[RMDB]
RNA sequence: GGGAACGACUCGAGUAGAGUCGAAAACAAAACAAUUAACAGCAGGACAAAAGCCAAACACUAUAGCAAUCUGGCUAUAUGAUAUGCAGAAAAUAGUGAUUACUGUGCUCUUUGCUGCAUCAUGCAAAUCGCACGGCACUUUCGAGUGCCGUGCGAUAAAAGAAACAACAACAACAAC
Reactivity to 2A3 in 0.01 (KOAc 150mM, MgCl2 10mM, bicine 150mM(pH8.5), 24C), signal-to-noise 1, nucleotides 027 to 126: c000a000a080a000a000c000a000a020u000u140a030a000c030a190g000c000a000g000g030a000c000a000a270a000a000g000c000c000a040a050a040c050a000c100u060a000u030a010g070c000a100a060u060c000u000g080g070c060u050a000u050a000u210g140a080u000a000u140g000c000a000g130a260a000a060a000u110a000g100u050g220a220u130u130a110c050u050g180u300g070c000u100c220u120u060u000g000c000u060g060c000a050u160c000a000u250g120c110a120a000

Structure probing data (2A3) for a 177-nucleotide construct. It was measured as part of the RMDB library OK1LIB. For 2A3 the reverse transcriptase was SuperScript II with manganese. The 2A3 profile rests on 403 reads. High 2A3 reactivity points to a flexible backbone, as in loops and unpaired stretches. The RNA was probed in 150 mM KOAc, 10 mM MgCl2 and 150 mM bicine (pH 8.5) at 24 C.